The data come from the RNA Mapping Database (RMDB), library OK2TST.
The record gives the reactivity of an RNA of 177 nucleotides to 2A3 and DMS.
Reactivities are rounded to 0.1 and cut off at 0 and 3.
For DMS, 1,707 sequencing reads were counted.
RNA sequence: GGGAACGACUCGAGUAGAGUCGAAAAAACAUUGAACAGUUUGUACUAAAUCUAGAAUAUGAACUCCGUUUCGUCGAGCAUAAAUAUAUUUAGCCAUACGAGGAUUCCAUCGAGAUGUACGAUGUCCUCUUAACUUCCACUUCGGUGGAAGUUAAGAAAAAGAAACAACAACAACAAC
Reactivity to 2A3 in 0.01 (KOAc 150mM, MgCl2 10mM, bicine 150mM(pH8.5), 24C), signal-to-noise 1, nucleotides 027 to 126: a000a000c030a020u060u090g070a030a000c030a020g050u030u070u070g040u060a050c030u020a040a110a120u000c010u000a050g070a090a150u040a070u060g050a050a050c020u000c020c030g040u060u150u090c040g050u080c050g000a060g010c020a110u020a130a030a070u150a030u030a050u130u000u040a010g000c010c000a050u000a020c010g000a000g040g000a040u020u150c040c010a030u050c020g000a060g020a070u090g010u070a010c000g010a020u030g020u070c010c020
Reactivity to DMS in 0.01 (KOAc 150mM, MgCl2 10mM, bicine 150mM(pH8.5), 24C), signal-to-noise 3, nucleotides 027 to 126: a080a060c040a070u000u000g010a100a080c080a150g020u010u000u010g010u000a100c020u010a020a030a020u010c030u010a050g000a150a130u000a020u000g010a070a110c040u000c050c020g000u000u030u020c080g010u010c120g000a060g010c030a030u000a030a120a110u000a040u000a030u000u000u000a000g000c300c030a090u000a040c060g010a070g020g010a120u000u010c110c070a040u010c020g000a120g020a100u000g010u000a050c020g000a040u010g010u000c050c020